[RMDB]
RNA sequence: GGGAACGACUCGAGUAGAGUCGAAAAUGGUGAGAGAUGCCAGCCUGGCUUGUCCUGGACUCUACCUGGGAGGGCCAUAAUGGGGAUGGAGAAGAUUCAUUCAUUCAUCCAUCGGACAGCAGCCACCCUCUCUUAUUGGGUUCGCCCAAUAAGAGAGAAAAGAAACAACAACAACAAC
Reactivity to DMS in 0.01 (KOAc 150mM, MgCl2 10mM, bicine 150mM(pH8.5), 24C), signal-to-noise 5, nucleotides 027 to 126: u000g010g010u000g000a160g010a100g010a120u010g010c030c030a070g010c130c060u000g010g010c030u000u000g020u000c010c000u010g010g000a140c100u010c110u010a060c060c020u000g020g000g010a200g000g000g010c020c030a050u010a050a100u010g010g000g020g010a020u010g010g000a030g010a040a050g000a110u000u010c210a150u010u010c050a090u010u000c020a090u000c000c000a030u000c030g010g000a110c060a070g010c060a110g000c030c030a110c080c040
Reactivity to 2A3 in 0.01 (KOAc 150mM, MgCl2 10mM, bicine 150mM(pH8.5), 24C), signal-to-noise 4, nucleotides 027 to 126: u070g020g010u060g020a170g000a010g010a090u130g060c000c010a020g020c040c030u020g010g000c020u070u080g160u150c000c010u010g010g020a050c030u020c040u180a130c030c040u020g030g000g000a030g010g010g000c010c010a040u150a090a080u120g080g000g000g000a000u020g000g010a030g010a070a020g040a050u160u130c030a060u180u030c020a050u050u020c020a110u080c030c010a030u040c020g030g050a010c010a030g060c000a000g010c020c010a030c020c010
This 177-nucleotide RNA was probed chemically with DMS and 2A3.
The reactions ran in a buffer of 150 mM KOAc, 10 mM MgCl2 and 150 mM bicine (pH 8.5), at 24 C.
Source: RMDB library OK2TST, as collected in RNAgym.